[RMDB]
RNA sequence: GGGAACGACUCGAGUAGAGUCGAAAACCGUGCUUCGGCACGGAAAAAAGAUAUGGACUGAACUACUGAACCAAGUGCGUUGAAACAAAUUCGGAAACGAAUUUGUGGAGCAUCAAAGUCAGCAGUCCUAAGUCAAAAAGAGGGAUUCGUCCCUCAAACCCAACCAUAUGUUCGCAUAUGGUUGGGUAAAAGAAACAACAACAACAAC
Reactivity to DMS in 0.01 (KOAc 150mM, MgCl2 10mM, bicine 150mM(pH8.5), 24C), signal-to-noise 1, nucleotides 027 to 156: c000c010g010u000g030c000u000u000c300g050g060c010a000c020g000g020a000a030a060a100a100a090g010a170u010a170u020g020g000a050c000u000g010a030a000c000u010a060c000u030g020a030a060c020c040a180a260g030u000g020c010g060u000u000g020a300a250a040c020a000a010a000u000u010c010g050g000a190a040a130c010g030a010a000u000u000u010g000u010g000g000a170g000c010a000u000c000a030a090a140g000u010c020a010g000c010a000g000u000c000c010u000a070a010g000u010c000a020a130a160a100a160g010a040g000g000g020a080u000u000c060g010u000c000c010c000u010c000a010a110
Reactivity to 2A3 in 0.01 (KOAc 150mM, MgCl2 10mM, bicine 150mM(pH8.5), 24C), signal-to-noise 4, nucleotides 027 to 156: c000c000g000u000g000c020u100u140c300g150g000c000a030c030g020g000a150a030a020a000a000a010g040a010u030a010u040g010g010a000c010u000g020a110a070c070u150a030c030u200g050a120a050c090c070a250a150g030u010g020c020g180u300u040g000a000a000a000c000a000a000a000u000u000c000g000g010a020a020a020c000g020a000a000u010u000u000g000u000g000g000a000g010c000a000u130c080a040a120a050g030u020c040a020g030c010a000g010u000c000c000u000a030a000g010u010c030a020a000a030a150a060g000a000g020g030g000a010u080u090c180g070u020c050c000c010u010c010a000a000

Structure probing data (DMS and 2A3) for a 207-nucleotide construct.